[RMDB]
RNA sequence: GGGAACGACUCGAGUAGAGUCGAAAAUUACGCAUCGAUAACUUCCAGCGACCAUCAUAUGCUUAAACGCACUGGAAAUGAUGCCACAUUUAGAGUGCGACAAAUUAAGGCACUGACACGCAUCGCACUAUCCAUGAUACUUCGGUAUCAUGGAUAGAAAAGAAACAACAACAACAAC
Reactivity to DMS in 0.01 (KOAc 150mM, MgCl2 10mM, bicine 150mM(pH8.5), 24C), signal-to-noise 8, nucleotides 027 to 126: u030u010a130c240g010c010a020u000c020g010a120u030a100a150c170u000u010c000c020a030g000c110g000a120c140c100a100u000c140a090u040a080u020g010c040u010u020a050a050a090c130g010c010a100c010u000g000g000a010a030a080u020g000a030u000g030c050c160a110c140a020u010u010u000a090g010a050g020u000g000c000g000a070c160a050a060a110u030u020a080a090g000g000c020a030c040u000g000a080c100a050c090g000c070a120u020c030g000c090a230
Reactivity to 2A3 in 0.01 (KOAc 150mM, MgCl2 10mM, bicine 150mM(pH8.5), 24C), signal-to-noise 9, nucleotides 027 to 126: u150u080a050c070g000c030a030u040c020g150a130u060a180a080c060u020u010c000c010a010g020c020g100a070c070c010a060u150c030a040u140a050u240g030c010u090u200a090a060a020c050g000c000a010c010u010g050g020a020a030a030u080g010a030u050g020c020c000a080c000a020u070u090u050a090g010a010g050u010g020c020g040a050c120a050a120a070u230u180a110a060g060g010c020a010c050u020g030a020c020a010c070g050c020a040u060c030g000c020a020
This 177-nucleotide RNA was probed chemically with DMS and 2A3. The data come from the RNA Mapping Database (RMDB), library OK1LIB. For 2A3, 22,412 sequencing reads were counted. Conditions: 150 mM KOAc, 10 mM MgCl2 and 150 mM bicine (pH 8.5), 24 C.